[RMDB]
RNA sequence: GGGAACGACUCGAGUAGAGUCGAAAACGCUGGGAGUUGAGAACCGAAGGCCCUAAUCAUACAGAGCGAUCUGAAGCGCGCACGGAUCGCGACGAAGUAUGAUUAGGGCCUCGGACAACUCCUGUGCUGAAGCGCGCACGGCAACCGAAAGGUGCGACUCUUCUCAGAAGUUCGCUUCUGAGAAGAGAAAAGAAACAACAACAACAAC
Reactivity to 2A3 in 0.01 (KOAc 150mM, MgCl2 10mM, bicine 150mM(pH8.5), 24C), signal-to-noise 2, nucleotides 027 to 156: c030g000c030u040g010g010g020a030g020u020u030g050a090g050a300a230c040c030g030a130a120g010g000c000c000c000u000a010a020u000c010a000u010a020c020a050g050a010g010c000g010a000u000c000u040g080a250a060g030c050g010c000g000c010a010c000g000g010a000u000c000g000c040g040a050c030g060a110a020g020u030a000u000g000a000u000u000a000g000g000g010c080c000u000c000g000g000a000c000a000a000c000u000c000c000u010g010u020g000c010u030g020a140a040g000c000g000c000g010c000a010c010g030g000c000a010a020c020c010g010a100a030a030g030g000u030g000c010g040a040
Reactivity to DMS in 0.01 (KOAc 150mM, MgCl2 10mM, bicine 150mM(pH8.5), 24C), signal-to-noise 1, nucleotides 027 to 156: c020g030c010u000g020g050g010a140g000u000u000g010a180g000a120a230c030c000g000a050a120g040g020c000c000c000u010a020a000u000c010a040u010a030c000a080g040a160g030c000g020a030u010c010u000g000a060a100g000c000g040c030g000c010a300c000g000g000a000u000c000g030c000g010a170c240g000a080a250g030u000a040u030g000a030u020u000a010g000g050g010c010c000u010c010g010g000a110c020a010a020c010u000c010c000u010g010u010g000c010u000g000a050a070g010c000g010c020g000c020a300c000g000g000c020a100a100c060c030g010a100a160a000g000g080u000g030c000g000a270
Source: RMDB library RNAMAK, as collected in RNAgym. Chemical mapping of a 207-nucleotide RNA with 2A3 and DMS. Conditions: 150 mM KOAc, 10 mM MgCl2 and 150 mM bicine (pH 8.5), 24 C.